An RNA of 177 nucleotides, treated with 2A3 and DMS and read out base by base. The 2A3 profile rests on 23,826 reads. Values cover nucleotides 27 to 126. The RNA was probed in 150 mM KOAc, 10 mM MgCl2 and 150 mM bicine (pH 8.5) at 24 C.

RNA sequence: GGGAACGACUCGAGUAGAGUCGAAAAGGAUCCUAAGUACUCUGGGUAACUGCCACGAGUUCAGUUACCAGUGAGGAGUACUCUAUUUGUCAAAGAACUCGUGGUUGACGGAUAGAGAAUAGGAUCGCUACUGCUAAGUAUUCGUACUUAGCAGUAGAAAAGAAACAACAACAACAAC
Reactivity to 2A3 in 0.01 (KOAc 150mM, MgCl2 10mM, bicine 150mM(pH8.5), 24C), signal-to-noise 5, nucleotides 027 to 126: g020g000a000u000c000c000u010a060a000g040u020a050c000u000c010u070g070g010g000u040a030a030c000u010g010c010c010a010c060g060a040g010u060u070c000a010g010u010u020a000c000c020a040g060u050g090a070g010g020a030g040u050a040c000u000c000u010a030u000u020u020g010u010c030a010a030a070g040a100a050c020u010c070g040u000g040g040u010u020g000a010c010g010g020a010u020a020g020a010g020a040a050u020a030g000g000a000u000c000g000
Reactivity to DMS in 0.01 (KOAc 150mM, MgCl2 10mM, bicine 150mM(pH8.5), 24C), signal-to-noise 9, nucleotides 027 to 126: g010g000a010u000c000c000u000a030a190g010u000a050c000u000c000u000g010g010g010u000a030a040c010u000g010c160c040a010c110g010a090g010u010u000c110a040g000u000u000a030c020c020a120g020u010g010a120g000g000a090g010u000a080c000u000c000u000a020u000u000u000g000u000c020a060a070a100g010a080a040c070u000c100g010u000g010g010u000u000g000a030c040g000g000a080u000a000g010a030g010a150a130u000a010g010g000a010u000c010g000